[RMDB]
RNA sequence: GGGAACGACUCGAGUAGAGUCGAAAAAUAGGCUUAUCAAGAGAGGAGGAGGGACUGGCCCGAUGAAACCCGGCAGCCAGAAAUGGUGCCAAUUCCUGCAGCGGAAACGUUGAAAGAUGAGCCGAUGACACUUGUAACUUCGGUUACAAGAAAAGAAACAACAACAACAAC
Reactivity to 2A3 in 0.01 (KOAc 150mM, MgCl2 10mM, bicine 150mM(pH8.5), 24C), signal-to-noise 6, nucleotides 027 to 129: a000u160a040g000g000c000u030u030a010u050c050a090a020g130a020g010a020g130g000a000g010g010a030g000g020g010a010c000u010g000g010c000c000c000g040a060u130g080a040a050a040c030c020c000g010g000c030a040g080c000c000a010g040a020a070a030u160g050g010u060g040c000c000a010a020u020u000c000c010u040g030c020a010g010c010g010g000a050a030a020c020g020u010u020g040a120a070a020g000a020u010g000a010g000c010c010g000a030u080g010a000c030a010
Reactivity to DMS in 0.01 (KOAc 150mM, MgCl2 10mM, bicine 150mM(pH8.5), 24C), signal-to-noise 9, nucleotides 027 to 129: a040u020a100g020g020c050u030u030a030u000c040a090a060g000a100g020a060g000g000a030g000g000a290g000g030g030a080c080u000g040g050c020c030c050g030a030u050g000a050a070a110c130c090c000g000g010c050a070g000c030c020a000g020a080a050a090u000g020g030u000g010c040c020a070a240u000u020c000c000u000g000c060a030g010c030g020g010a090a070a070c030g020u020u000g030a080a120a060g010a000u040g020a040g000c000c030g010a080u030g020a080c180a090